The record gives the reactivity of an RNA of 177 nucleotides to 2A3 and DMS. It was measured as part of the RMDB library OK1LIB. Reactivities are given for positions 27 through 126. The reactions ran in a buffer of 150 mM KOAc, 10 mM MgCl2 and 150 mM bicine (pH 8.5), at 24 C. For DMS the reverse transcriptase was MarathonRT.
RNA sequence: GGGAACGACUCGAGUAGAGUCGAAAAAGACCUCGUGCAGCAUGUGUUUGUGCUAAACAACACCACCGCCCUGCUCUGCGUGCGCAAAUUGUACAAUAACCAUGUCGCGAUUGCUAUCGACGUCACCCAAUCGCAUUUCGUUCGCGAAAUGCGAUUGAAAAGAAACAACAACAACAAC
Reactivity to 2A3 in 0.01 (KOAc 150mM, MgCl2 10mM, bicine 150mM(pH8.5), 24C), signal-to-noise 7, nucleotides 027 to 126: a000g060a040c030c020u030c020g040u050g030c050a060g010c010a060u080g040u010g020u120u080u060g040u030g030c050u120a090a100a010c040a030a020c030a020c050c010a030c010c020g020c010c010c010u040g020c000u010c010u050g040c020g050u050g030c040g010c050a030a060a110u100u120g040u030a050c040a040a070u080a090a060c030c050a030u070g060u110c040g000c010g070a040u020u130g020c010u020a020u080c010g020a010c040g020u020c010a050c010c000
Reactivity to DMS in 0.01 (KOAc 150mM, MgCl2 10mM, bicine 150mM(pH8.5), 24C), signal-to-noise 3, nucleotides 027 to 126: a180g000a120c040c000u010c100g040u000g000c180a060g000c060a030u020g010u000g010u010u020u030g020u030g000c110u060a050a160a070c120a110a090c090a070c010c110a120c030c020g000c020c010c010u010g010c050u010c030u000g000c130g040u010g000c080g000c070a010a080a100u050u000g030u020a080c060a070a040u020a110a070c040c060a010u020g020u020c070g000c020g000a110u000u030g020c030u000a060u000c040g010a040c070g000u010c030a090c020c010